[RMDB]
RNA sequence: GGGAACGACUCGAGUAGAGUCGAAAAAUUGUCAUAGUUUUGUUCAAGUUUAUUCACGCGCUGAUUCAGGCGGUUAUAAGCCAUAACAGCAGGGAUAGCGGCAAACAGACCGAUUGCUGUGGCAAUCCACGUGAACCAAUUUCGAUUGGUUCACGUGAAAAGAAACAACAACAACAAC
Reactivity to 2A3 in 0.01 (KOAc 150mM, MgCl2 10mM, bicine 150mM(pH8.5), 24C), signal-to-noise 3, nucleotides 027 to 126: a000u030u040g000u010c010a000u010a050g050u000u100u150u060g030u030u050c060a100a010g010u100u190u100a050u100u090c090a100c170g160c000g000c030u020g090a270u050u030c040a050g000g000c020g020g000u060u080a120u010a100a030g030c010c010a010u050a090a030c000a000g010c020a000g020g000g000a020u020a020g000c010g020g030c030a020a010a020c010a010g070a080c010c080g120a110u000u210g000c010u010g000u000g010g030c010a000a000u010c040
Reactivity to DMS in 0.01 (KOAc 150mM, MgCl2 10mM, bicine 150mM(pH8.5), 24C), signal-to-noise 4, nucleotides 027 to 126: a060u000u000g000u000c010a020u000a010g020u000u010u010u000g000u000u000c060a200a140g010u000u000u000a050u010u010c110a130c200g000c110g020c010u000g010a090u000u000c170a090g000g020c010g010g000u000u010a050u000a100a150g020c170c120a050u000a040a040c020a040g010c000a100g010g010g000a000u000a010g000c000g000g020c230a040a020a030c050a090g020a050c150c060g000a050u010u000g010c020u010g020u000g010g000c000a010a030u000c090